[RMDB]
RNA sequence: GGGAACGACUCGAGUAGAGUCGAAAAGGCUUCUAACUAUGAAGUUCACUGUCCUUGGAUGUGAGAAGGCCGUGCUGAGUCAUCCAAUGUUUGUGAGGCCACUGCUUCUUACAAUAUUUAUACCGAACCAUUGCAGUCUGUUCGCAGACUGCAAUGGAAAAGAAACAACAACAACAAC
Reactivity to DMS in 0.01 (KOAc 150mM, MgCl2 10mM, bicine 150mM(pH8.5), 24C), signal-to-noise 1, nucleotides 027 to 126: g000g050c040u000u000c000u000a130a180c230u020a210u000g010a010a050g030u000u000c080a080c050u010g000u000c000c020u000u010g010g030a160u000g000u000g000a030g000a030a040g010g010c000c130g010u000g060c180u020g030a200g000u000c010a190u010c060c040a040a110u010g010u020u010u020g000u000g000a160g030g010c030c070a040c080u000g000c020u010u000c030u000u010a040c050a050a160u010a040u060u000u000a100u000a240c080c080g000a040a190
Reactivity to 2A3 in 0.01 (KOAc 150mM, MgCl2 10mM, bicine 150mM(pH8.5), 24C), signal-to-noise 1, nucleotides 027 to 126: g040g000c000u000u000c000u070a170a260c130u110a130u300g010a000a060g000u220u250c070a080c020u010g010u000c010c000u000u040g260g050a110u120g020u030g020a050g030a100a050g190g020c010c000g110u050g010c060u120g050a050g000u010c040a090u000c130c020a100a130u230g090u090u220u040g050u160g090a030g040g000c000c000a040c050u040g000c000u030u020c010u000u000a010c030a010a060u100a220u280u110u060a300u120a090c000c090g060a110a070